[RMDB]
RNA sequence: GGGAACGACUCGAGUAGAGUCGAAAAACUGAUACCUUACGAGGUAUCAGAAUGAUUUCGUGGUAGAGCGCCACGAACGGAAAAUAAAGAAAGCUCGAUUGAAACGCACCGUGUACGCACGGUGCGAAAAAGUCGAUCCAGUUCGCUGGAUCGACAACCUUCUUGCAUAGUUCGCUAUGCAAGAAGGAAAAGAAACAACAACAACAAC
Reactivity to 2A3 in 0.01 (KOAc 150mM, MgCl2 10mM, bicine 150mM(pH8.5), 24C), signal-to-noise 1, nucleotides 027 to 156: a010c000u000g000a000u000a000c000c000u020u010a050c170g130a030g030g020u020a010u020c000a000g000a010a010u180g050a070u000u040u000c000g000u010g010g010u040a110g000a010g000c000g000c010c000a000c000g000a060a010c000g000g010a050a000a010a020u070a030a020a010g170a070a050a010g000c010u030c050g170a180u010u280g060a070a070a000c000g000c000a000c000c020g010u030g020u040a010c240g000c040a000c060g020g000u000g010c000g050a030a000a000a010a000g000u000c000g000a000u000c010c000a020g020u050u130c140g090c150u010g010g000a000u000c010g000a010c000a000a000